[RMDB]
RNA sequence: GGGAACGACUCGAGUAGAGUCGAAAAGAUAUGGAAACGUUCCACGCAUCAGGGAGGUUAUGAGGUCCUCGGAAACGAGGACUACCCACCAUAACCUCCCUGAUGCGUGGAUACGUUUCCUAAGUCACUUACUAGGAUAGUUCGCUAUCCUAGUAAGAAAAGAAACAACAACAACAAC
Reactivity to DMS in 0.01 (KOAc 150mM, MgCl2 10mM, bicine 150mM(pH8.5), 24C), signal-to-noise 4, nucleotides 027 to 126: g000a060u000a300u010g010g000a010a020a010c010g010u000u000c000c000a010c000g000c000a000u000c000a010g000g010g010a020g020g010u000u000a010u010g030a100g010g020u000c000c010u000c010g000g000a090a080a220c000g020a010g010g010a020c020u000a020c050c050c130a300c080c000a000u000a000a020c010c000u010c000c000c000u000g000a000u000g000c000g000u010g000g000a000u000a000c000g000u000u010u000c000c000u000a010a050g000u010c040a300